An RNA of 177 nucleotides, treated with 2A3 and DMS and read out base by base. For 2A3, 1,064 sequencing reads were counted. Conditions: 150 mM KOAc, 10 mM MgCl2 and 150 mM bicine (pH 8.5), 24 C. The data come from the RNA Mapping Database (RMDB), library RFM100.
RNA sequence: GGGAACGACUCGAGUAGAGUCGAAAAGAUAGGUCGCUGUCGCUACGGUGAUUGGACACUGACACUGAGUCAACUAGCCUUGUGCGCGCGGUUCUUCGCGCGCGGAACCGGAGGACGGUCCGAGCCAAUUCAACAGCUCGUUCGCGAGCUGUUGAAUAAAAGAAACAACAACAACAAC
Reactivity to 2A3 in 0.01 (KOAc 150mM, MgCl2 10mM, bicine 150mM(pH8.5), 24C), signal-to-noise 2, nucleotides 027 to 126: g140a120u270a050g030g000u000c020g020c050u010g000u010c010g000c240u050a030c030g000g080u060g050a120u110u050g030g020a010c000a000c140u020g030a000c020a010c190u140g100a020g100u010c000a010a000c050u050a030g010c000c010u060u060g060u010g030c010g000c000g000c000g000g080u180u030c070u120u100c000g000c000g000c000g030c000g000g000a000a000c000c000g000g000a010g010g000a020c000g000g020u020c020c000g010a010g070c020c000a030
Reactivity to DMS in 0.01 (KOAc 150mM, MgCl2 10mM, bicine 150mM(pH8.5), 24C), signal-to-noise 1, nucleotides 027 to 126: g000a020u000a130g020g000u000c110g070c040u000g000u030c000g000c030u000a070c020g080g000u000g000a120u000u030g010g000a090c180a090c080u000g000a010c050a040c240u010g010a210g000u000c000a000a010c130u020a080g010c000c000u000u000g000u030g000c040g170c000g020c000g130g020u160u130c250u040u000c000g000c070g100c010g000c000g000g000a150a000c030c000g060g000a080g010g000a080c000g020g000u030c010c170g000a080g010c020c000a140